[RMDB]
RNA sequence: GGGAACGACUCGAGUAGAGUCGAAAAAUUUCAGGUCUCAGAUGUGGGAAAUGUGCAACACAAGUUACCUUCGGAGAUCUUAAUCUUCCACAAAGUGCCAGCGGAUAAAGACACACUAGACUUGAUGCAAGUAUGGUCUCUUCGGAGACCAUACUUGAAAAGAAACAACAACAACAAC
Reactivity to DMS in 0.01 (KOAc 150mM, MgCl2 10mM, bicine 150mM(pH8.5), 24C), signal-to-noise 2, nucleotides 027 to 126: a090u030u020u000c020a010g000g000u000c000u010c110a060g000a060u020g000u010g030g040g000a060a180a030u010g020u010g000c110a180a120c030a010c050a100a110g000u010u060a110c020c060u020u060c020g000g010a040g000a050u030c150u010u000a000a020u000c030u000u010c030c010a100c080a070a010a150g020u020g000c030c070a070g040c060g000g020a070u040a060a140a160g000a130c030a020c070a010c050u000a020g000a000c030u010u000g010a040u030g020
Reactivity to 2A3 in 0.01 (KOAc 150mM, MgCl2 10mM, bicine 150mM(pH8.5), 24C), signal-to-noise 4, nucleotides 027 to 126: a000u050u040u020c000a000g000g010u000c010u000c010a050g060a190u060g050u090g030g090g090a090a120a030u090g010u070g050c130a230a040c020a020c030a130a110g100u100u200a230c030c000u060u110c040g030g010a010g000a000u020c000u010u010a080a050u000c020u060u020c020c000a130c080a160a100a010g080u050g050c020c040a040g000c050g070g000a050u120a160a190a010g070a020c020a010c000a000c060u010a020g070a080c000u020u020g000a010u080g070